[RMDB]
RNA sequence: GGGAACGACUCGAGUAGAGUCGAAAACUUAUCCGGUUUUAACGCUGUUUUAUUGGCGCAAAGGUCUACGGAUAAACAACUAAUAAUUAAACCUUUUGUGUGCGAAACGUGGUUGUUUAACGUACUCACUGCCCCCAGGGAUUCGUCCCUGGGGGAACGUCUGUUUACCCUUCGGGGUAAACAGACGAAAAGAAACAACAACAACAAC
Reactivity to 2A3 in 0.01 (KOAc 150mM, MgCl2 10mM, bicine 150mM(pH8.5), 24C), signal-to-noise 1, nucleotides 027 to 156: c030u040u040a030u020c000c000g040g170u000u000u000u170a040a000c030g020c030u020g090u200u060u150u300a090u220u300g020g000c010g040c030a040a040a110g010g000u020c070u090a000c000g010g010a010u020a020a080a020c050a040a000c080u190a050a150u200a250a020u180u160a070a090a000c030c000u040u090u090u060g090u000g000u010g080c150g090a090a120a030c010g030u010g030g000u020u020g000u020u040u020a030a060c000g000u000a010c000u000c010a120c000u040g030c020c000c010c000c000a000g000g000g020a030u010u030c090g010u010c050c000c000u000g010g000g000g000g000a000a000